Chemical mapping of a 207-nucleotide RNA with DMS and 2A3. Source: RMDB library RNAMAK, as collected in RNAgym. In probing experiments dimethyl sulfate is read out at A N1 and C N3, which are open when not base-paired. For 2A3, 3,602 sequencing reads were counted. The reactions ran in a buffer of 150 mM KOAc, 10 mM MgCl2 and 150 mM bicine (pH 8.5), at 24 C. The DMS profile rests on 10,379 reads. For 2A3 the reverse transcriptase was SuperScript II with manganese. For DMS the reverse transcriptase was MarathonRT.

[RMDB]
RNA sequence: GGGAACGACUCGAGUAGAGUCGAAAAGGGCAUUCGUGCCCGUCAAAUCCUAAGUCGCUCGCACUAUGGUGGAGAUCGAUAAGGCUCGGAAACGAGCCUUUUGACGAUCGAUGAAACCAUAAACGAGCGAUAUGGACCGGUAUGCUUUCGAGCAUAAUAACCUAAAGUAGUUCGCUACUUUAGGUUAAAAAGAAACAACAACAACAAC
Reactivity to DMS in 0.01 (KOAc 150mM, MgCl2 10mM, bicine 150mM(pH8.5), 24C), signal-to-noise 4, nucleotides 027 to 156: g010g030g070c000a070u000u000c280g020u010g000c000c000c010g000u020c070a060a090a120u000c010c010u000a130a300g030u000c000g000c010u000c010g040c030a160c220u000a000u010g010g020u000g000g000a150g010a010u000c000g010a150u000a040a030g010g040c000u010c000g010g000a160a130a230c020g010a020g010c010c010u000u000u000u000g010a240c100g000a040u000c010g010a150u020g000a260a130a040c030c010a020u000a020a130a050c010g010a020g000c000g010a010u000a050u010g030g000a050c050c030g010g000u000a050u000g030c020u000u000u010c160g010a160g020c040a040u000a070a180
Reactivity to 2A3 in 0.01 (KOAc 150mM, MgCl2 10mM, bicine 150mM(pH8.5), 24C), signal-to-noise 3, nucleotides 027 to 156: g030g000g030c020a010u080u180c230g150u100g010c000c020c000g020u010c010a120a120a050u020c000c000u050a130a030g040u010c000g000c000u000c000g010c010a050c070u010a010u000g000g020u000g000g030a030g000a010u000c000g010a010u000a070a000g000g020c010u010c000g080g000a090a080a080c020g020a000g000c000c020u010u000u000u000g010a010c000g000a000u010c000g000a010u020g020a000a010a010c000c000a000u010a010a070a010c010g000a000g000c000g010a000u000a000u010g000g030a030c020c040g040g140u080a020u030g000c000u060u130u150c300g060a010g000c030a010u070a060a050